RNA sequence: GGGAACGACUCGAGUAGAGUCGAAAAUUACUAUUUGCGCAAGUUUUUACUUGUAUAGUUAUGCUUUAGCUCGUGACAAUUCCAGUAUGAAUGACACUGCAACAAAAAACUAUACCUUCGGGUAUAGCGUUGAAAUACAGUUCGCUGUAUUUCAACGAAAAGAAACAACAACAACAAC
Reactivity to DMS in 0.01 (KOAc 150mM, MgCl2 10mM, bicine 150mM(pH8.5), 24C), signal-to-noise 2, nucleotides 027 to 126: u000u000a070c020u000a000u000u000u020g020c260g000c020a010a040g010u010u020u030u000u000a030c010u000u000g010u000a030u000a040g000u000u000a070u000g010c060u000u000u000a080g030c030u000c040g010u000g000a040c070a070a230u000u000c000c020a100g000u000a110u000g010a080a040u000g030a100c060a050c050u020g000c040a040a080c130a010a060a050a070a030a130c010u000a000u000a000c000c000u000u010c170g020g020g020u000a000u000a000g020
Reactivity to 2A3 in 0.01 (KOAc 150mM, MgCl2 10mM, bicine 150mM(pH8.5), 24C), signal-to-noise 3, nucleotides 027 to 126: u050u020a010c000u000a030u060u090u290g110c050g000c000a000a000g010u000u040u090u220u250a150c000u000u000g020u020a020u010a020g010u000u040a020u070g030c020u070u060u040a080g050c000u000c050g040u020g020a060c020a040a040u040u030c000c000a040g090u100a100u210g110a130a060u070g010a020c010a000c050u100g020c020a050a030c060a060a230a020a020a000a000c010u000a000u000a000c010c000u000u080c180g050g020g000u000a000u000a010g000
The data come from the RNA Mapping Database (RMDB), library RFMREP. This 177-nucleotide RNA was probed chemically with DMS and 2A3. The RNA was probed in 150 mM KOAc, 10 mM MgCl2 and 150 mM bicine (pH 8.5) at 24 C. 2A3 adducts were read by reverse transcription with SuperScript II with manganese.